An RNA of 177 nucleotides, treated with 2A3 and DMS and read out base by base. The DMS profile rests on 20,217 reads. Reactivities are given for positions 27 through 126. High DMS reactivity at an A or C suggests that its Watson-Crick edge is free. It was measured as part of the RMDB library OK1LIB. The RNA was probed in 150 mM KOAc, 10 mM MgCl2 and 150 mM bicine (pH 8.5) at 24 C.
RNA sequence: GGGAACGACUCGAGUAGAGUCGAAAACGGCCAAGAGAUCCUCUACAUCUGCGCGACGGGCACCACCAAGAUCGAGGACAAGGACGGCAAUCCGGUUGAUCCGGAGGUGCUGCAAGAACUCAUGGCCGAUUAUCUGUCAGUUCGCUGACAGAUAAUCAAAAGAAACAACAACAACAAC
Reactivity to 2A3 in 0.01 (KOAc 150mM, MgCl2 10mM, bicine 150mM(pH8.5), 24C), signal-to-noise 9, nucleotides 027 to 126: c020g010g010c010c010a040a020g030a010g000a080u030c020c010u010c010u040a070c040a130u020c020u060g060c070g020c050g170a120c090g020g020g020c060a040c030c010a030c000c010a040a030g020a050u070c050g020a020g010g010a020c050a020a050g140g030a070c000g010g000c000a000a020u000c000c000g010g040u080u260g140a100u120c000c000g000g000a010g050g150u060g000c000u010g010c010a040a060g050a110a050c000u010c010a030u050g010g000c000c000
Reactivity to DMS in 0.01 (KOAc 150mM, MgCl2 10mM, bicine 150mM(pH8.5), 24C), signal-to-noise 8, nucleotides 027 to 126: c050g000g020c000c000a050a050g000a040g000a260u000c010c010u000c020u010a120c300a060u000c020u000g000c120g010c080g020a100c120g000g000g000c040a100c070c060a100c050c050a110a060g000a040u010c110g000a030g000g000a100c260a090a100g010g010a130c000g010g000c010a080a070u000c000c000g010g000u020u030g000a160u050c000c000g000g000a000g000g010u000g000c000u000g010c040a100a090g010a110a220c010u000c010a120u000g000g000c010c020